[RMDB]
RNA sequence: GGGAACGACUCGAGUAGAGUCGAAAAGUGCAUUCAUCAAUGCAGGUUAAGCCAAAGGGAUGUCCCGACCGGAGGCCGACAAUCCAGGCAACCGGAUGUCAUCACGUUGUUGCAGUACCAGAUGGCAAAAAGAUCCGCUCGUUCGCGAGCGGAUCAACCUAAGUGUGUACUUCGGUACACACUUAGGAAAAGAAACAACAACAACAAC
Reactivity to 2A3 in 0.01 (KOAc 150mM, MgCl2 10mM, bicine 150mM(pH8.5), 24C), signal-to-noise 1, nucleotides 027 to 156: g090u020g030c010a010u000u060c000a020u020c030a090a050u050g000c010a010g210g110u040u130a010a040g000c050c000a100a020a030g060g000g020a040u000g050u010c020c000c000g020a050c020c010g000g000a010g010g000c000c000g000a010c040a020a190u080c080c120a040g020g000c030a060a070c050c070g020g020a050u020g050u020c010a030u010c020a010c070g040u040u030g000u000u020g000c040a020g140u130a100c010c020a130g020a180u190g030g000c070a050a000a050a050a000g000a000u040c010c000g000c000u000c000g050u010u060c300g010c020g090a000g000c000g020g000a000u000c000a000a000